[RMDB]
RNA sequence: GGGAACGACUCGAGUAGAGUCGAAAAAUGAGAUCCCAUCUUGCACACUGUGCUAAUUUGAGAUUCUCAUGCCUCCUACUUGGAGAGAUCUGGACUAUAAGUCAGGGCAUCUGACUCUGCCAGCCACAAAACGUACAAGGCUUCGGCCUUGUACGAACCUCGUUUCUAAGUUCGCUUAGAAACGAGGAAAAGAAACAACAACAACAAC
Reactivity to DMS in 0.01 (KOAc 150mM, MgCl2 10mM, bicine 150mM(pH8.5), 24C), signal-to-noise 1, nucleotides 027 to 156: a030u000g010a070g000a070u000c010c000c030a030u020c080u000u010g010c040a040c000a250c130u000g030u000g020c010u000a000a020u020u000u000g000a070g000a070u000u000c000u010c000a050u010g030c100c020u020c030c020u000a070c120u000u000g010g000a090g000a150g010a070u000c030u000g010g000a040c070u010a110u000a030a100g010u010c020a060g010g040g030c210a180u000c070u010g000a020c000u010c020u030g050c010c040a070g020c050c010a110c000a100a050a140a140c000g040u000a000c010a010a030g000g010c010u020u000c300g060g010c000c000u000u000g000u000a000c000g000a010a010
Reactivity to 2A3 in 0.01 (KOAc 150mM, MgCl2 10mM, bicine 150mM(pH8.5), 24C), signal-to-noise 4, nucleotides 027 to 156: a000u020g000a010g000a010u000c000c000c010a000u000c010u010u030g000c000a020c040a090c170u270g010u000g010c050u090a050a060u040u010u000g040a040g000a030u300u050c000u000c000a010u050g040c010c010u020c010c010u120a290c100u100u190g020g010a030g010a000g040a090u020c000u010g030g040a080c060u110a110u040a270a040g020u020c010a010g040g040g150c090a140u080c110u020g010a010c000u010c010u050g020c010c000a020g050c010c010a090c040a050a090a060a030c020g000u010a000c000a000a000g010g010c000u020u100c140g050g000c000c000u000u000g000u000a010c000g000a000a000
Chemical mapping of a 207-nucleotide RNA with DMS and 2A3. The DMS profile rests on 2,197 reads. The data come from the RNA Mapping Database (RMDB), library M2RFPK. The reactions ran in a buffer of 150 mM KOAc, 10 mM MgCl2 and 150 mM bicine (pH 8.5), at 24 C. Values are in units of 0.01, from 0 to 300, in steps of 10.